This 207-nucleotide RNA was probed chemically with 2A3. The 2A3 profile rests on 513 reads. Values are in units of 0.01, from 0 to 300, in steps of 10. 2A3 adducts were read by reverse transcription with SuperScript II with manganese. Conditions: 150 mM KOAc, 10 mM MgCl2 and 150 mM bicine (pH 8.5), 24 C.
RNA sequence: GGGAACGACUCGAGUAGAGUCGAAAAACUCAUCUGCUGCAGCACUCAUAUUAUUUGCAAAGAAAUCAGAUGAAAAUCUACAAUUCUGCAUCAACUAUCAAGAGCUCAAUAAAAUUACACAAAAAGAUUAAUACCUUCUCCCACUCAUCAAUGAAACAUCAUUUCCCAGUUUCGACUGGGAAAUGAUAAAAGAAACAACAACAACAAC
Reactivity to 2A3 in 0.01 (KOAc 150mM, MgCl2 10mM, bicine 150mM(pH8.5), 24C), signal-to-noise 1, nucleotides 027 to 156: a000c030u010c030a000u030c030u030g030c000u020g090c060a020g000c010a030c040u030c100a050u130a020u210u220a040u080u250u080g050c060a180a070a000g040a010a110a030u080c020a020g010a050u030g030a030a050a020a100u050c020u040a070c080a080a100u070u000c020u030g020c010a040u020c020a070a110c060u100a020u110c000a070a000g020a000g130c020u000c100a000a050u170a090a060a000a060u190u190a080c060a000c060a050a180a060a000a020g020a000u060u060a090a040u000a010c000c040u080u050c020u000c000c040c000a080c040u050c000a110u030c000a000a140u100g020a020a020a010c020